RNA sequence: GGGAACGACUCGAGUAGAGUCGAAAAGAACAACUCCUGCACGUCCGCGCUGCCCUCUGCCGUCCCACGCACCAAUCUCGUACGGGUGCUGUAUUCGUUGACUACGAGAAGGCAUUCGAUACAGUAGUCCUCUAAUCCUCUUCGGAGGAUUAGAGGAAAAAGAAACAACAACAACAAC
Reactivity to 2A3 in 0.01 (KOAc 150mM, MgCl2 10mM, bicine 150mM(pH8.5), 24C), signal-to-noise 3, nucleotides 027 to 126: g090a080a000c070a050a060c050u050c030c010u010g000c050a040c050g040u030c000c030g010c000g000c030u020g000c000c000c000u040c010u020g000c000c000g060u040c000c010c000a000c000g050c000a040c010c040a020a110u050c040u040c060g010u060a010c020g000g010g010u000g010c070u090g000u050a100u070u000c000g000u010u060g140a080c080u070a000c120g010a010g030a070a010g000g010c010a000u020u000c010g140a170u010a040c020a020g090u130a020g050
Reactivity to DMS in 0.01 (KOAc 150mM, MgCl2 10mM, bicine 150mM(pH8.5), 24C), signal-to-noise 3, nucleotides 027 to 126: g010a060a060c150a100a130c070u030c010c000u000g010c060a070c060g000u000c050c050g000c050g000c020u030g000c040c010c020u000c030u000g000c060c020g000u000c000c000c000a090c150g020c100a020c150c030a080a130u010c030u010c090g040u000a020c020g010g000g000u000g010c000u030g010u020a180u080u000c000g000u020u030g010a160c170u050a050c030g000a000g020a120a240g010g000c000a000u000u010c000g000a180u000a000c020a030g030u000a100g000